[RMDB]
RNA sequence: GGGAACGACUCGAGUAGAGUCGAAAAUGCUUGUGCAUUUAAAUGGGUGUGGCGCUAAGUAUAUCUUGUUUACCUUAUCUUUCUGUGGAAAAGUUUUGAUGUCUAGGUUUGUCACAUCAUGCCUGUUAGCGUUCAUGCACUUCGGUGCAUGAACGCUAAAAGAAACAACAACAACAAC
Reactivity to 2A3 in 0.01 (KOAc 150mM, MgCl2 10mM, bicine 150mM(pH8.5), 24C), signal-to-noise 1, nucleotides 027 to 126: u000g000c000u050u250g000u040g100c000a030u010u020u020a150a180a170u200g000g000g000u000g000u000g000g060c000g060c040u030a160a000g050u040a080u000a000u090c020u030u030g020u060u070u130a150c010c020u130u050a140u000c010u120u190u070c120u050g050u300g050g100a010a010a010a010g050u120u000u220u000g000a000u000g000u060c070u060a030g120g000u050u080u260g040u000c000a000c000a000u000c000a000u010g000c000c000u000g010u000u000

The data come from the RNA Mapping Database (RMDB), library RFM100. An RNA of 177 nucleotides, treated with 2A3 and read out base by base. High 2A3 reactivity points to a flexible backbone, as in loops and unpaired stretches. Values are in units of 0.01, from 0 to 300, in steps of 10. For 2A3, 355 sequencing reads were counted. Conditions: 150 mM KOAc, 10 mM MgCl2 and 150 mM bicine (pH 8.5), 24 C.